RNA sequence: GGGAACGACUCGAGUAGAGUCGAAAAAGGGGAUACAUUAAGUAUUGAGAAGAACGCAUCUACAGUAUCUUUUGUUGGCAAUAGAACAAUUACUGCUGGUGGAGCACUGGCUAGUGCCUCAGGCGUACAGUUUUGUUAGUUUCGACUAACAAAACUGAAAAGAAACAACAACAACAAC
Reactivity to 2A3 in 0.01 (KOAc 150mM, MgCl2 10mM, bicine 150mM(pH8.5), 24C), signal-to-noise 3, nucleotides 027 to 126: a000g070g030g040g010a020u050a090c030a100u140u200a140a060g130u040a060u080u220g070a100g020a060a030g010a090a020c030g020c060a030u010c010u080a070c030a000g040u070a080u060c000u030u110u060u050g040u000u050g030g060c040a060a070u060a170g090a110a020c030a070a030u130u070a030c040u070g050c000u030g010g090u100g050g070a060g070c010a010c020u010g110g020c110u200a010g020u000g050c040c000u040c030a020g070g000c030g000u070a050
Reactivity to DMS in 0.01 (KOAc 150mM, MgCl2 10mM, bicine 150mM(pH8.5), 24C), signal-to-noise 4, nucleotides 027 to 126: a090g020g010g010g000a100u010a040c060a100u010u000a120a160g010u000a040u000u010g000a100g010a090a080g000a090a060c110g000c040a070u000c020u000a110c100a040g000u000a030u000c060u000u000u010u000g020u000u010g000g000c080a060a090u010a100g010a050a040c050a040a030u000u000a040c030u000g030c030u000g010g020u010g000g010a060g020c040a010c030u010g010g010c160u010a100g000u000g000c030c020u000c040a150g010g000c030g000u010a080